This 177-nucleotide RNA was probed chemically with 2A3 and DMS. For 2A3, 18,310 sequencing reads were counted. The RNA was probed in 150 mM KOAc, 10 mM MgCl2 and 150 mM bicine (pH 8.5) at 24 C. The data come from the RNA Mapping Database (RMDB), library TTRDEL. Reactivities are given for positions 27 through 126.
[RMDB]
RNA sequence: GGGAACGACUCGAGUAGAGUCGAAAAGAUAUGGAGCCAUCGUGAACGUCGACGAAGUCGGAAACGACAGAGACGAGCACGAGUGGCUCCUAAGUCAAACGCGUAUGCACUUCGGUGCAUACGCGAACACAUCUACAAAGUUCGCUUUGUAGAUGUGAAAAGAAACAACAACAACAAC
Reactivity to 2A3 in 0.01 (KOAc 150mM, MgCl2 10mM, bicine 150mM(pH8.5), 24C), signal-to-noise 5, nucleotides 027 to 126: g040a010u090a040u190g000g000a000g010c000c000a020u020c010g000u000g010a090a050c000g020u010c020g120a300c060g070a230a030g010u000c010g010g030a090a060a050c010g000a000c000a010g020a000g000a010c010g000a030g030c020a010c010g020a030g040u040g000g000c000u000c000c000u000a010a010g000u010c020a070a010a040c020g000c000g000u000a000u000g000c000a010c020u050u100c300g090g000u000g000c000a000u000a000c000g000c010g010a000a000
Reactivity to DMS in 0.01 (KOAc 150mM, MgCl2 10mM, bicine 150mM(pH8.5), 24C), signal-to-noise 6, nucleotides 027 to 126: g000a040u000a300u010g000g000a010g010c010c000a060u000c000g010u000g000a040a040c010g010u000c010g000a190c220g000a110a110g000u000c000g010g000a100a070a170c000g010a010c000a040g000a170g000a010c000g000a040g010c000a000c000g000a020g040u000g010g010c000u000c000c000u000a000a060g010u000c050a040a110a190c020g000c000g010u000a010u000g000c000a010c000u000u010c190g030g010u000g000c000a000u000a000c000g010c000g000a010a080